Structure probing data (2A3 and DMS) for a 207-nucleotide construct. DMS adducts were read by reverse transcription with MarathonRT. Conditions: 150 mM KOAc, 10 mM MgCl2 and 150 mM bicine (pH 8.5), 24 C. Source: RMDB library OK3TST, as collected in RNAgym. The DMS profile rests on 1,613 reads. The 2A3 profile rests on 1,644 reads.
RNA sequence: GGGAACGACUCGAGUAGAGUCGAAAAGUAGUGGCAUCCAGUGUGUGGCCUGUUCAAUACCAUUACCAGGCGCAACCGUUAUCUGCCCACGCCGAAAGGUGCUUCCGGUAUAGCGUGCGGAGCAUAUUAGCGGUUCAACCAGAGAGCUAUCGAAAUACACGUCACCCAUGUUCGCAUGGGUGACGUGAAAAGAAACAACAACAACAAC
Reactivity to 2A3 in 0.01 (KOAc 150mM, MgCl2 10mM, bicine 150mM(pH8.5), 24C), signal-to-noise 3, nucleotides 027 to 156: g050u090a010g010u000g060g010c070a220u040c080c060a110g000u020g010u040g020u050g300g070c000c010u030g040u130u200c120a060a050u170a200c000c070a020u030u150a050c070c030a050g040g000c040g000c000a000a010c010c000g000u020u020a020u030c030u050g030c010c010c000a020c010g000c020c000g130a160a060a030g030g010u090g090c110u300u100c010c010g050g000u050a030u050a050g000c020g000u040g040c140g090g020a080g100c020a030u050a030u160u010a020g000c000g000g000u010u080c050a060a020c020c010a020g050a000g000a000g130c010u050a030u250c010g020a020a010a040u130a050
Reactivity to DMS in 0.01 (KOAc 150mM, MgCl2 10mM, bicine 150mM(pH8.5), 24C), signal-to-noise 1, nucleotides 027 to 156: g000u020a050g050u010g030g000c030a110u000c050c030a110g000u000g010u000g060u000g060g000c100c080u010g020u000u010c030a170a150u010a050c020c050a120u000u000a160c070c030a120g010g010c030g010c110a070a020c010c030g060u010u000a020u000c170u010g000c000c020c010a090c000g050c000c040g020a110a070a140g010g030u000g050c240u010u000c000c030g000g020u000a170u000a070g000c010g010u000g060c030g050g030a190g000c090a020u000a070u000u010a050g010c030g010g030u000u030c060a050a130c000c000a130g000a170g010a130g030c060u010a020u000c120g010a050a050a110u010a290